[RMDB]
RNA sequence: GGGAACGACUCGAGUAGAGUCGAAAAGAUAUGGAUCAUUCCAGCCGAUAAGCGUGUAUCGGAAACGAUAUGAACGCUUUUGACGGCUGAAUGAUCCUAAGUCAAAAGCCACCGUUCGCGGUGGCAACAUCAGCUAGUGGUUCGCCACUAGCUGAUGAAAAGAAACAACAACAACAAC
Reactivity to 2A3 in 0.01 (KOAc 150mM, MgCl2 10mM, bicine 150mM(pH8.5), 24C), signal-to-noise 1, nucleotides 027 to 126: g000a010u050a010u010g000g000a000u020c010a000u010u050c260c130a000g000c000c040g200a290u200a300a000g000c000g000u000g000u030a010u000c000g000g000a000a020a010c000g010a020u000a010u020g300a170a050c010g000c000u040u000u020u080g160a060c030g000g000c000u000g000a000a000u010g000a010u000c000c000u030a010a010g000u020c040a000a000a200a090g010c000c000a020c040c010g060u080u100c300g000c000g180g020u000g000g000c010a010a000
Reactivity to DMS in 0.01 (KOAc 150mM, MgCl2 10mM, bicine 150mM(pH8.5), 24C), signal-to-noise 2, nucleotides 027 to 126: g010a020u000a200u010g000g010a000u000c000a010u010u010c190c100a010g020c000c000g000a120u020a010a010g010c000g060u000g000u000a000u000c000g000g000a040a040a080c010g020a010u000a010u000g000a150a040c000g020c000u010u000u010u010g000a170c120g020g000c000u010g000a020a000u000g000a010u000c000c010u000a000a040g000u000c000a110a130a130a160g010c010c000a020c000c000g060u010u010c210g010c010g040g020u000g000g000c000a020a020